An RNA of 207 nucleotides, treated with 2A3 and read out base by base.
Reactivities are given for positions 27 through 156.
For 2A3, 455 sequencing reads were counted.
The RNA was probed in 150 mM KOAc, 10 mM MgCl2 and 150 mM bicine (pH 8.5) at 24 C.
For 2A3 the reverse transcriptase was SuperScript II with manganese.

[RMDB]
RNA sequence: GGGAACGACUCGAGUAGAGUCGAAAAAGGUUUACCUGGAGAUGCUCUCUUAUGUGCAGGGCUGAGCUACUCACUGGGAAGUCCAAGAGAAAAUUAGAAUAAAGCACCUGCUCUGGGCACACGAAGCCCUGCGGUGCACAACUUGGCCAGCCUCCGGCUGUUGCUCCAAAUUCGUUUGGAGCAACAGAAAAGAAACAACAACAACAAC
Reactivity to 2A3 in 0.01 (KOAc 150mM, MgCl2 10mM, bicine 150mM(pH8.5), 24C), signal-to-noise 1, nucleotides 027 to 156: a000g060g000u000u010u040a020c000c010u040g010g010a030g030a070u030g020c000u020c000u040c030u170u050a050u300g070u130g070c090a030g040g000g080c090u070g010a020g030c030u190a120c000u010c040a060c090u060g000g070g060a080a160g050u020c030c030a060a000g040a000g000a060a150a120a000u190u140a130g050a080a100u050a110a150a040g010c000a000c010c080u230g090c080u070c160u090g000g000g000c010a070c000a020c210g120a070a030g010c000c020c020u000g000c000g000g000u030g000c010a000c010a050a030c010u010u030g000g010c020c000a000g000c000c060u040c050c050g010g000